Structure probing data (2A3 and DMS) for a 177-nucleotide construct. 2A3 adducts were read by reverse transcription with SuperScript II with manganese. The reactions ran in a buffer of 150 mM KOAc, 10 mM MgCl2 and 150 mM bicine (pH 8.5), at 24 C.
[RMDB]
RNA sequence: GGGAACGACUCGAGUAGAGUCGAAAACGGCAAUAUCGCCAGUGGUGCUGUCGUGAUGCGGUCUUCGCAUGGACCGCACAAUGAAGAUACGGUGCUUUUGUAUCGUACUUAUUGUUUCUGGUGCGCUACUGUCGAAAAAUUUCGAUUUUUCGACAGUAAAAGAAACAACAACAACAAC
Reactivity to 2A3 in 0.01 (KOAc 150mM, MgCl2 10mM, bicine 150mM(pH8.5), 24C), signal-to-noise 9, nucleotides 027 to 126: c010g000g010c010a020a020u030a020u110c030g100c180c100a080g120u230g130g010u030g000c010u010g000u020c010g010u030g030a060u030g000c000g000g000u010c000u030u050c020g000c020a020u030g010g000a000c000c000g000c000a000c000a000a020u130g050a030a020g030a060u010a010c000g010g000u010g010c020u120u220u140u300g020u020a010u010c000g000u000a000c000u010u040a010u010u010g010u000u020u000c010u040g040g000u010g000c010g000c000u010
Reactivity to DMS in 0.01 (KOAc 150mM, MgCl2 10mM, bicine 150mM(pH8.5), 24C), signal-to-noise 2, nucleotides 027 to 126: c100g000g020c010a030a050u000a050u010c040g030c170c200a120g000u050g000g000u000g000c070u020g000u000c030g050u000g000a100u000g000c000g000g000u010c000u000u010c020g000c040a030u000g000g000a010c010c000g000c040a010c060a060a020u000g030a040a020g000a140u000a020c000g020g070u000g000c000u000u050u020u020g010u000a000u000c000g000u000a000c020u000u000a080u010u000g010u000u000u000c030u000g020g090u000g000c040g010c300u030